About this RNA: Source: RMDB library OK2TRN, as collected in RNAgym. This 177-nucleotide RNA was probed chemically with DMS and 2A3.
[RMDB]
RNA sequence: GGGAACGACUCGAGUAGAGUCGAAAAGCAACCAAAGUACCGACAGUAUCAUUAAUCAAUGCUACAAUUUCAAUAGGCAACUCUCUCUUGGAAAUUUCGUUUUGUAGUAAUGGGACGACAUCGUGGCAUGUCCCAUACGGUUCGCCGUAUGGGACAUAAAAGAAACAACAACAACAAC
Reactivity to DMS in 0.01 (KOAc 150mM, MgCl2 10mM, bicine 150mM(pH8.5), 24C), signal-to-noise 3, nucleotides 027 to 126: g010c110a120a150c000c030a080a130a080g000u000a060c120c010g010a070c120a070g020u010a030u010c030a060u000u000a130a100u000c100a050a040u010g010c020u000a040c050a060a080u000u010u000c070a040a030u000a030g010g000c100a070a030c150u000c050u000c050u010c070u000u010g010g000a030a100a110u000u010u000c090g010u000u000u000u000g040u000a030g020u000a050a070u000g000g010g000a020c060g010a070c150a040u000c090g030u000g020g010c130
Reactivity to 2A3 in 0.01 (KOAc 150mM, MgCl2 10mM, bicine 150mM(pH8.5), 24C), signal-to-noise 2, nucleotides 027 to 126: g030c020a070a060c000c020a120a030a000g060u020a060c020c020g010a020c020a010g030u030a010u090c040a050u060u130a080a100u130c100a040a060u080g000c000u020a010c020a060a070u030u060u050c040a060a030u040a100g000g070c010a050a190c020u040c000u020c000u000c010u070u020g040g080a060a070a090u170u110u040c040g050u040u020u020u140g050u020a060g020u010a070a050u080g000g000g040a020c020g000a020c000a070u050c060g010u070g040g010c090

The DMS profile rests on 1,662 reads.